[RMDB]
RNA sequence: GGGAACGACUCGAGUAGAGUCGAAAAGAGCAUCUGAUGCUGGUCGACCUCGGCCGAAACGACCUGGGUCGGGUCUGCACGCCGGGCACUGUUCGGGUCGAGGAUUACAGCCACAUCGAGCGGUACAUCAAAGGUAAGCGUUCGCGCUUACCUUUGAAAAAGAAACAACAACAACAAC
Reactivity to 2A3 in 0.01 (KOAc 150mM, MgCl2 10mM, bicine 150mM(pH8.5), 24C), signal-to-noise 1, nucleotides 027 to 126: g040a000g010c030a200u020c080u260g030a000u010g020c240u000g030g060u060c000g010a020c030c000u000c000g020g020c010c020g040a050a020a010c050g000a030c000c000u010g010g000g010u150c000g030g000g010u110c100u060g090c130a020c020g060c050c010g000g010g000c030a030c040u090g010u090u000c050g060g040g030u030c010g000a010g030g050a020u140u190a060c040a020g020c010c030a010c000a020u030c010g000a020g030c030g010g020u080a060c040a030
Reactivity to DMS in 0.01 (KOAc 150mM, MgCl2 10mM, bicine 150mM(pH8.5), 24C), signal-to-noise 2, nucleotides 027 to 126: g000a160g010c020a080u000c070u020g030a030u000g010c270u000g010g000u000c050g020a130c000c010u000c010g010g000c000c020g010a040a020a240c060g040a090c030c010u010g000g030g000u000c030g020g010g040u020c110u000g000c110a080c120g000c030c000g010g000g000c030a020c040u010g010u010u000c020g000g010g050u000c000g000a050g020g010a110u010u000a110c090a150g000c000c020a050c040a040u000c010g010a030g030c000g000g000u000a030c190a110
An RNA of 177 nucleotides, treated with 2A3 and DMS and read out base by base.
The RNA was probed in 150 mM KOAc, 10 mM MgCl2 and 150 mM bicine (pH 8.5) at 24 C.
2A3 adducts were read by reverse transcription with SuperScript II with manganese.
It was measured as part of the RMDB library OK2TST.